[RMDB]
RNA sequence: GGGAACGACUCGAGUAGAGUCGAAAAACUGUUGCGGUUGACGAUACACUGUUACCGUCAGAGAAACGGGACUCUGUCCACUGCGUGAACGAGUUCUCGGGGUCGAUCUUGCCGUUUCCCGAUCGAUGUCAACCCGCCCCCUUCCGCAGUGAAGGCGGCCAAUAAGUCUCUUCGGAGACUUAUUGGCAAAAGAAACAACAACAACAAC
Reactivity to DMS in 0.01 (KOAc 150mM, MgCl2 10mM, bicine 150mM(pH8.5), 24C), signal-to-noise 1, nucleotides 027 to 156: a080c000u000g000u010u000g000c010g030g020u000u050g020a050c000g040a110u010a070c030a180c100u000g010u010u010a010c000c020g050u020c000a100g000a180g020a030a040a070c060g020g010g010a050c040u000c010u010g000u000c020c010a040c000u010g000c090g030u000g030a040a040c000g010a090g020u010u000c010u000c060g030g020g030g020u010c050g000a030u000c050u000u000g050c040c030g000u000u010u000c000c030c050g010a060u000c040g010a090u020g030u000c050a060a130c050c000c000g000c010c010c000c010c030u000u010c020c020g010c040a080g010u010g020a070a090g020g030c030g020
Reactivity to 2A3 in 0.01 (KOAc 150mM, MgCl2 10mM, bicine 150mM(pH8.5), 24C), signal-to-noise 3, nucleotides 027 to 156: a010c080u100g060u100u080g010c020g020g000u010u000g010a040c040g040a080u070a150c120a050c160u100g050u110u150a250c020c030g020u040c050a030g070a010g020a090a120a020c020g020g020g020a010c010u020c070u160g080u030c040c000a000c060u080g020c030g040u180g020a020a000c020g040a050g100u140u060c020u030c080g030g000g000g000u020c000g000a060u000c020u070u210g170c090c030g030u040u070u080c000c000c000g000a030u030c010g010a020u070g110u200c030a080a080c000c010c020g020c010c010c000c000c000u000u000c010c010g040c040a010g000u010g110a010a000g010g030c070g040

Conditions: 150 mM KOAc, 10 mM MgCl2 and 150 mM bicine (pH 8.5), 24 C. The record gives the reactivity of an RNA of 207 nucleotides to DMS and 2A3. It was measured as part of the RMDB library OK3TST. The 2A3 profile rests on 1,406 reads. The DMS profile rests on 3,698 reads. For 2A3 the reverse transcriptase was SuperScript II with manganese.